This 177-nucleotide RNA was probed chemically with 2A3 and DMS. For 2A3 the reverse transcriptase was SuperScript II with manganese. The DMS profile rests on 2,119 reads. For DMS the reverse transcriptase was MarathonRT.
RNA sequence: GGGAACGACUCGAGUAGAGUCGAAAAGGAAAAACGACUAUCUCUUCGACUGCUUCUGUUAUCGCAUUUCGUGCGAGGAUAAAGGUCGUUCGGAGUGAAAGCGUUCACUAUCCACACUUUGCCCGCAGUGAUUAAAGUGGUUCGCCACUUUAAUCACAAAAGAAACAACAACAACAAC
Reactivity to 2A3 in 0.01 (KOAc 150mM, MgCl2 10mM, bicine 150mM(pH8.5), 24C), signal-to-noise 3, nucleotides 027 to 126: g000g040a030a100a000a010a010c030g300a160c020u020a060u090c000u010c000u030u010c010g000a000c000u010g000c000u050u040c020u040g010u010u040a020u020c000g000c020a020u060u110u300c170g060u010g000c000g000a020g000g010a000u030a010a060a000g020g000u000c000g020u070u010c010g030g010a010g000u020g030a030a070a000g030c020g010u040u030c040a020c100u130a140u040c010c000a050c010a010c060u080u070u200g050c000c000c000g040c060a040
Reactivity to DMS in 0.01 (KOAc 150mM, MgCl2 10mM, bicine 150mM(pH8.5), 24C), signal-to-noise 2, nucleotides 027 to 126: g010g000a050a100a080a020a030c010g010a170c030u000a080u000c010u010c020u010u000c010g000a030c000u010g010c020u000u000c070u000g020u000u010a080u000c000g020c040a030u000u000u000c190g040u000g010c010g000a010g010g020a010u000a010a030a040g010g020u000c090g000u000u000c010g030g000a010g030u010g000a010a080a030g010c050g000u000u000c050a130c150u000a080u000c000c020a070c170a040c090u000u000u000g010c000c000c040g040c250a110